Chemical mapping of a 177-nucleotide RNA with 2A3. For 2A3 the reverse transcriptase was SuperScript II with manganese. High 2A3 reactivity points to a flexible backbone, as in loops and unpaired stretches.
[RMDB]
RNA sequence: GGGAACGACUCGAGUAGAGUCGAAAAAGCAUGGUACUGUGCACGGAAACUGAAUCAUGGGUUUCAAAUGUCUGUGCCUGCUCUGAGUUCCUUAUUGGUUCUUUGAUUUGCGGGCCUGAUUUGAACCGAUCGGCGCUAGGUUCGCCUAGCGCCGAUCAAAAGAAACAACAACAACAAC
Reactivity to 2A3 in 0.01 (KOAc 150mM, MgCl2 10mM, bicine 150mM(pH8.5), 24C), signal-to-noise 2, nucleotides 027 to 126: a010g040c020a000u010g060g000u040a090c030u080g040u050g020c030a050c080g030g000a030a000a000c000u080g020a120a040u060c050a130u110g070g050g000u070u060u000c000a070a020a000u220g050u050c010u000g150u220g000c000c000u010g000c000u000c000u070g030a020g000u000u020c010c000u100u210a300u240u220g020g000u000u050c000u000u010u040g210a280u100u070u240g040c000g000g020g000c010c010u040g000a000u000u150u020g010a000a010c000c010